[RMDB]
The record gives the reactivity of an RNA of 177 nucleotides to DMS. The reactions ran in a buffer of 150 mM KOAc, 10 mM MgCl2 and 150 mM bicine (pH 8.5), at 24 C. The DMS profile rests on 610 reads. Reactivities are given for positions 27 through 126. It was measured as part of the RMDB library OK2TRN. DMS adducts were read by reverse transcription with MarathonRT.
RNA sequence: GGGAACGACUCGAGUAGAGUCGAAAACGCGCGUCCGAAUUACCGCCCACGUGGUCAGCUGAGUAACCAUUCUUCACGUGGGACGCAUCCGAGAGUGGCUGGCCGGCAGUAGCCGAAGCGCGAGCAGGCGUUGAAGGCACUUCGGUGCCUUCAACGCAAAAGAAACAACAACAACAAC
Reactivity to DMS in 0.01 (KOAc 150mM, MgCl2 10mM, bicine 150mM(pH8.5), 24C), signal-to-noise 1, nucleotides 027 to 126: c030g050c020g010c050g010u000c060c060g000a140a120u020u010a120c300c050g010c000c000c010a010c010g030u000g010g090u020c050a050g000c130u010g030a150g000u010a110a210c210c090a270u050u010c030u000u000c010a010c030g010u000g000g010g020a000c010g050c060a070u010c010c030g000a180g010a050g060u010g020g000c030u010g010g000c010c070g000g000c080a120g000u000a200g010c030c010g000a100a120g000c140g000c030g030a190g010c140a020g000